[RMDB]
RNA sequence: GGGAACGACUCGAGUAGAGUCGAAAAGUUACAUAGUCAAUUGCAGAUUGAACUGUAGUGAUUUCGUUUGAAUCUUCAUCAGGGAUAGUGAUGUCGAAGUCAUUUUCGAAAGACAUAACAAGUUCAAUGCAGUCAGGUGAUUCGUCACCUGACUGCAAAAAGAAACAACAACAACAAC
Reactivity to 2A3 in 0.01 (KOAc 150mM, MgCl2 10mM, bicine 150mM(pH8.5), 24C), signal-to-noise 1, nucleotides 027 to 126: g050u030u080a070c050a110u210a030g140u130c030a070a160u140u020g040c010a010g050a120u030u000g010a050a010c010u040g010u050a040g000u000g060a070u000u030u000c030g010u000u020u020g000a010a070u020c010u060u020c000a000u010c010a010g110g170g160a190u110a190g120u050g010a010u010g000u030c020g020a150a090g070u070c010a020u010u150u000u020c000g000a020a000a000g030a020c030a040u060a030a000c030a020a200g040u060u060c000a010a020
Reactivity to DMS in 0.01 (KOAc 150mM, MgCl2 10mM, bicine 150mM(pH8.5), 24C), signal-to-noise 1, nucleotides 027 to 126: g040u010u010a050c070a090u000a170g030u020c040a100a100u020u000g020c120a090g000a170u000u000g030a000a000c010u000g000u000a120g000u010g000a300u000u000u000c010g040u000u000u010g010a050a070u010c000u000u000c020a000u000c030a070g010g010g000a110u020a120g020u000g010a000u030g010u010c050g010a020a100g020u000c010a030u040u000u000u010c010g000a000a000a010g000a110c040a030u000a020a030c010a030a090g000u000u000c000a010a030
This 177-nucleotide RNA was probed chemically with 2A3 and DMS. For 2A3, 824 sequencing reads were counted. Values cover nucleotides 27 to 126. The RNA was probed in 150 mM KOAc, 10 mM MgCl2 and 150 mM bicine (pH 8.5) at 24 C. Source: RMDB library OK2TST, as collected in RNAgym.